Conditions: 150 mM KOAc, 10 mM MgCl2 and 150 mM bicine (pH 8.5), 24 C. Structure probing data (2A3 and DMS) for a 177-nucleotide construct. For DMS the reverse transcriptase was MarathonRT. It was measured as part of the RMDB library OK2TRN. For DMS, 1,330 sequencing reads were counted. The 2A3 profile rests on 1,193 reads. Values cover nucleotides 27 to 126.
[RMDB]
RNA sequence: GGGAACGACUCGAGUAGAGUCGAAAAAAAUCGGCGUGGCACUGCCAUCGCCCCAACCGAACAGGUUGCUGCCGUCAAAUCCGACUGCGGUUUUGUGCUGGUGCGAGCUCAGCGCCUGGGCCUGCGAGGGCCAUAACGAAUUCGUUCGUUAUGGCCCAAAAGAAACAACAACAACAAC
Reactivity to 2A3 in 0.01 (KOAc 150mM, MgCl2 10mM, bicine 150mM(pH8.5), 24C), signal-to-noise 1, nucleotides 027 to 126: a000a000a060u140c070g000g010c020g000u020g000g030c060a040c270u080g000c010c010a080u070c070g030c000c000c000c000a030a010c000c020g060a110a040c010a130g020g010u040u080g000c000u010g020c010c020g000u020c050a120a070a200u050c090c080g000a030c030u040g020c030g040g090u070u020u100u140g080u070g000c020u030g000g040u080g050c020g020a030g070c000u010c100a000g000c010g030c040c060u040g020g000g080c000c000u050g000c020g020a120
Reactivity to DMS in 0.01 (KOAc 150mM, MgCl2 10mM, bicine 150mM(pH8.5), 24C), signal-to-noise 2, nucleotides 027 to 126: a030a070a040u010c040g000g000c000g040u030g020g010c000a170c140u030g000c080c000a080u000c050g010c000c020c110c070a050a050c030c010g020a070a110c130a130g000g010u000u000g000c060u000g010c020c070g000u010c040a050a060a080u010c150c080g000a080c110u000g000c000g020g010u000u010u000u000g020u000g000c040u010g000g020u000g030c040g030a130g050c080u010c080a070g000c090g000c040c030u000g000g000g000c030c010u030g030c140g010a160